[RMDB]
RNA sequence: GGGAACGACUCGAGUAGAGUCGAAAAAAAGGUAUCAUCGAUGCAUGCUUGCAUGCAAUUCGAUGUAUACCUUAGUGACCCGCACUACACUGAGAAAGUAGCAAUUUACUAUGCGAAGCUAGUAAAUGAGUCGGGGUACAUUCGUGUACCCCGACUCAAAAGAAACAACAACAACAAC
Reactivity to 2A3 in 0.01 (KOAc 150mM, MgCl2 10mM, bicine 150mM(pH8.5), 24C), signal-to-noise 1, nucleotides 027 to 126: a000a000a000g030g000u000a000u020c000a000u000c000g010a000u000g000c000a000u000g000c000u070u120g040c000a030u000g020c000a000a160u130u040c000g000a000u000g000u000a000u000a000c000c010u000u040a000g000u000g040a050c000c000c000g030c000a000c030u140a000c040a020c060u030g070a010g060a170a160a000g000u140a000g000c010a000a000u000u010u010a070c050u030a020u110g070c000g070a020a010g000c030u000a000g020u020a020a000a000u000
This 177-nucleotide RNA was probed chemically with 2A3. For 2A3, 874 sequencing reads were counted. Source: RMDB library RFM100, as collected in RNAgym.